[RMDB]
RNA sequence: GGGAACGACUCGAGUAGAGUCGAAAAGAAUUGGGAGAAAGUUCCAAGACAAGGAUGUGAGAGGAGCCAAGGGGCCUUGACCCGGGGAAACAAAGGAGGGUGAAGGCUGUGGAGGAGUAGGCAGGUCCUGGAUAGAAAUAUUCGUAUUUCUAUCCAGAAAAGAAACAACAACAACAAC
Reactivity to 2A3 in 0.01 (KOAc 150mM, MgCl2 10mM, bicine 150mM(pH8.5), 24C), signal-to-noise 4, nucleotides 027 to 126: g020a040a090u110u070g010g030g030a050g060a060a180a030g110u040u030c020c020a040a000g080a030c030a040a030g050g010a040u060g050u080g070a080g000a020g050g020a000g000c010c010a040a030g080g030g000g000c010c000u010u030g040a020c000c000c000g000g040g010g020a090a160a020c060a080a130a040g080g030a060g020g020g000u050g050a020a010g020g000c020u040g040u040g030g030a050g010g000a030g020u060a040g050g000c040a020g000g050u040c010
Reactivity to DMS in 0.01 (KOAc 150mM, MgCl2 10mM, bicine 150mM(pH8.5), 24C), signal-to-noise 7, nucleotides 027 to 126: g010a090a130u010u000g010g010g010a050g000a100a110a120g010u000u000c030c020a070a080g000a110c100a090a080g000g010a070u000g020u010g010a100g000a080g000g000a070g010c060c050a070a110g010g000g010g010c030c030u000u000g000a050c030c010c020g000g010g000g010a120a060a080c180a050a070a110g000g010a100g010g000g010u000g010a040a040g000g010c050u000g010u010g010g010a090g000g000a050g020u000a040g000g000c060a060g010g000u010c100
The record gives the reactivity of an RNA of 177 nucleotides to 2A3 and DMS. The 2A3 profile rests on 6,912 reads. DMS adducts were read by reverse transcription with MarathonRT. For 2A3 the reverse transcriptase was SuperScript II with manganese. For DMS, 9,600 sequencing reads were counted.